[RMDB]
RNA sequence: GGGAACGACUCGAGUAGAGUCGAAAAUAAAACUUUAACAAACAGUUCUCAUAGCUCAAUUAACGGCAUUGCAUCCAAUGCUGCAAAUUCCAAACCAAGCGGAGCAGACACGGAUGAUAUCGAUGAGCAAGUAAUUAUAUUUCGAUAUAAUUACUUGAAAAGAAACAACAACAACAAC
Reactivity to 2A3 in 0.01 (KOAc 150mM, MgCl2 10mM, bicine 150mM(pH8.5), 24C), signal-to-noise 9, nucleotides 027 to 126: u140a000a070a030a020c070u140u170u230a110a040c070a060a110a020c040a060g020u070u000c020u000c020a070u110a060g010c010u020c050a060a240u190u140a200a070c050g060g000c040a040u010u200g020c000a000u000c020c000a060a100u230g000c000u010g000c010a060a120a260u140u000c020c010a050a080a120c050c050a130a010g100c090g050g010a020g000c000a010g030a030c020a000c080g010g010a000u010g010a010u040a030u050c050g040a040u030g010a010g020
Reactivity to DMS in 0.01 (KOAc 150mM, MgCl2 10mM, bicine 150mM(pH8.5), 24C), signal-to-noise 9, nucleotides 027 to 126: u020a070a070a090a100c090u030u030u020a090a100c160a110a110a110c150a100g000u000u000c020u000c020a100u030a090g000c030u000c020a060a100u020u030a070a140c080g000g000c110a060u010u010g000c040a030u000c020c020a280a220u030g000c010u000g000c020a060a100a110u020u020c010c030a060a070a110c150c190a090a110g040c170g010g000a060g000c000a010g000a030c050a130c190g000g000a020u000g000a060u020a040u010c030g000a070u010g000a050g000